RNA sequence: GGGAACGACUCGAGUAGAGUCGAAAAGGCGGUCUUAAACCGAAUGCGAAACGCGAUUUCAGGGUCGAAAUCGGUAUUUUUGCUGGCGGGAUGCUGGCCAUUCUAACGCCGACGAGCGGCCUGCCUUCGGAUGGCCCCUUUUCGAAGGGGCCAUCCGAAAAGAAACAACAACAACAAC
Reactivity to 2A3 in 0.01 (KOAc 150mM, MgCl2 10mM, bicine 150mM(pH8.5), 24C), signal-to-noise 1, nucleotides 027 to 126: g040g000c000g100g000u010c060u080u230a150a060a000c000c000g030a000a000u080g000c000g050a110a000a000c000g030c000g120a080u070u040u030c040a050g030g000g230u080c000g060a010a010a010u000c010g000g080u120a120u000u150u000u010u010g000c000u030g020g050c040g000g210g000a050u100g000c010u080g020g000c000c010a040u130u000c020u050a070a000c060g060c000c000g100a100c050g180a180g060c010g000g000c000c000u010g000c000c000u010u000